[RMDB]
RNA sequence: GGGAACGACUCGAGUAGAGUCGAAAAUGCCACUUUGUCACUAGUUUGUAUUAUGAGUUUCACACUCACUUCAAUGACGGUGAUAGAUACUACAUAUCACUCCUGCUUAGAGGGUCAUCUAAGCUAAACCAUGUGAAUAUAACCUUUCGGGCCUCGAUCACUACUUAUUCUUCGGAAUAAGUAGUGAAAAAGAAACAACAACAACAAC
Reactivity to 2A3 in 0.01 (KOAc 150mM, MgCl2 10mM, bicine 150mM(pH8.5), 24C), signal-to-noise 6, nucleotides 027 to 156: u110g030c000c000a090c060u120u080u100g030u010c010a000c040u040a100g080u070u020u090g130u090a160u150u050a070u150g020a020g020u040u210u220c070a060c010a010c030u030c000a030c020u100u100c070a090a180u150g050a050c050g010g020u000g020a000u010a030g060a010u130a110c050u040a030c100a090u070a020u080c020a030c030u050c000c040u050g000c000u020u010a000g000a010g020g060g050u090c020a030u000c020u010a000a000g000c000u010a020a010a010c050c050a070u120g040u040g060a060a010u110a030u040a070a100c010c020u050u140u110c020g020g020g010c010c020u050c020g040a040
Reactivity to DMS in 0.01 (KOAc 150mM, MgCl2 10mM, bicine 150mM(pH8.5), 24C), signal-to-noise 2, nucleotides 027 to 156: u010g020c030c020a190c200u010u000u010g020u010c030a050c020u000a110g020u000u000u010g040u000a090u010u000a070u000g010a050g010u000u010u010c190a220c150a080c030u020c010a030c040u000u010c020a100a070u000g010a070c070g020g000u010g060a020u000a010g010a090u000a060c120u010a030c040a220u010a080u000c030a080c070u010c030c030u010g020c020u000u000a050g010a040g020g040g020u000c180a070u010c030u010a040a040g020c040u010a050a100a070c000c060a050u010g020u010g000a080a090u000a110u000a060a050c020c050u010u010u000c030g000g000g010c070c010u000c010g000a300

Notes:
The record gives the reactivity of an RNA of 207 nucleotides to 2A3 and DMS. For DMS the reverse transcriptase was MarathonRT. 2A3 adducts were read by reverse transcription with SuperScript II with manganese. The reactions ran in a buffer of 150 mM KOAc, 10 mM MgCl2 and 150 mM bicine (pH 8.5), at 24 C. It was measured as part of the RMDB library ARCHII. Values cover nucleotides 27 to 156. For 2A3, 4,061 sequencing reads were counted.